[RMDB]
RNA sequence: GGGAACGACUCGAGUAGAGUCGAAAAAGUUGCAGGACCACUUCUGCGCUCGGCCCUUCCGGCUGGCUGGUUUAUUGCUGAUAAAUCUGGAGCCGGUGAGCGUGGGUCUCGCGGUAUCAUUGCAGCACUACGAUAUCAGUUUCGACUGAUAUCGUAGAAAAGAAACAACAACAACAAC
Reactivity to DMS in 0.01 (KOAc 150mM, MgCl2 10mM, bicine 150mM(pH8.5), 24C), signal-to-noise 3, nucleotides 027 to 126: a100g010u000u000g010c010a040g010g000a050c040c030a080c090u010u010c020u000g000c010g010c030u000c050g020g000c050c050c050u010u010c010c000g010g020c010u000g010g020c020u000g000g010u000u000u000a010u010u000g020c300u000g010a110u000a010a010a000u000c010u000g000g000a050g010c010c000g000g010u000g000a020g010c030g030u000g010g010g010u010c100u000c150g010c040g000g020u000a070u000c050a130u000u000g010c000a010g010c040a300
Reactivity to 2A3 in 0.01 (KOAc 150mM, MgCl2 10mM, bicine 150mM(pH8.5), 24C), signal-to-noise 5, nucleotides 027 to 126: a000g040u030u030g010c010a010g000g030a030c010c000a030c040u110u020c010u040g010c000g000c020u020c020g160g030c010c020c000u040u040c010c010g010g020c010u020g090g240c010u020g020g030u010u010u010a040u010u110g220c130u170g060a010u000a010a010a000u000c010u030g040g030a000g000c000c020g000g010u050g020a020g000c010g000u020g020g020g040u020c070u070c120g020c040g010g010u050a070u160c050a140u030u130g000c000a010g020c010a010